[RMDB]
RNA sequence: GGGAACGACUCGAGUAGAGUCGAAAAGGAACUUCUCUGCGGGAGUGUCCGGGAAUAAUUAAAACGAUGCACACAGGGUUUAGCGCGUACACGUAUUGCAUUAUGCCAACGCCCCGGUGCUGACACGCACCCGUGAAACGUUCGCGUUUCACGGGUGAAAAGAAACAACAACAACAAC
Reactivity to DMS in 0.01 (KOAc 150mM, MgCl2 10mM, bicine 150mM(pH8.5), 24C), signal-to-noise 2, nucleotides 027 to 126: g000g000a270a150c040u000u000c010u000c120u020g010c200g020g000g000a010g020u000g010u000c000c000g000g040g020a160a070u010a080a060u020u030a020a060a090a140c060g000a090u000g040c020a000c080a210c010a030g000g000g000u000u000u020a110g000c160g010c040g000u020a040c100a120c210g020u000a060u010u010g020c120a090u020u010a000u000g020c000c040a080a120c270g000c050c000c030c040g000g000u000g000c040u000g000a090c140a050c110g010
Reactivity to 2A3 in 0.01 (KOAc 150mM, MgCl2 10mM, bicine 150mM(pH8.5), 24C), signal-to-noise 2, nucleotides 027 to 126: g030g000a070a000c060u110u000c090u070c170u210g110c210g040g040g000a000g000u060g190u030c050c080g000g000g020a090a110u140a080a030u160u150a130a100a020a000c050g060a080u070g000c010a010c030a010c010a070g000g000g070u000u030u300a100g050c070g000c020g040u010a000c080a010c210g060u100a100u200u180g010c040a010u000u160a010u130g020c030c030a040a000c080g000c000c000c020c030g070g000u010g040c010u010g020a010c030a020c190g000